[RMDB]
RNA sequence: GGGAACGACUCGAGUAGAGUCGAAAAACAGACAAAUUCACUGAUGGAACAAAACAGAAAAGCCAGAAAUAGACCCAUGCAUGCAGCAGAUUUGAUGUAUGAUAGAAAUGGCAUUACAGAUCACUGAGUGGGAACAUUCUUUCUACGUGAGAAAAUAGAACGUAUCUAACUUCGGUUAGAUACGUUCAAAAGAAACAACAACAACAAC
Reactivity to 2A3 in 0.01 (KOAc 150mM, MgCl2 10mM, bicine 150mM(pH8.5), 24C), signal-to-noise 4, nucleotides 027 to 156: a010c020a010g140a020c040a030a120a050u110u070c030a040c060u060g010a040u100g050g010a070a030c040a040a060a060a050c080a040g080a060a130a010a000g060c020c020a020g080a030a080a020u100a010g030a010c010c010c000a010u060g000c000a000u040g000c000a030g000c030a020g060a180u140u160u100g010a010u040g020u050a040u030g060a070u030a090g120a010a060a020u060g020g000c000a000u010u060a030c010a010g060a020u040c020a010c080u020g020a000g040u070g000g010g030a020a010c020a050u010u050c000u030u070u040c020u070a030c040g010u080g110a040g060a160a020a010a160u300a030
Reactivity to DMS in 0.01 (KOAc 150mM, MgCl2 10mM, bicine 150mM(pH8.5), 24C), signal-to-noise 2, nucleotides 027 to 156: a100c050a170g000a200c050a080a090a130u010u000c010a090c020u020g010a060u000g010g000a100a170c040a060a070a100a110c040a260g000a060a110a110a060g000c000c010a100g010a050a040a220u000a140g000a170c040c000c030a060u000g000c060a030u010g010c030a060g030c000a070g030a080u000u000u000g020a070u000g090u000a020u000g000a110u010a110g020a030a080a080u000g010g020c000a060u040u000a100c020a070g000a070u000c020a080c010u000g000a120g050u000g000g010g000a050a030c010a140u000u000c080u000u010u000c000u010a020c060g040u000g000a100g010a050a030a030a110u000a170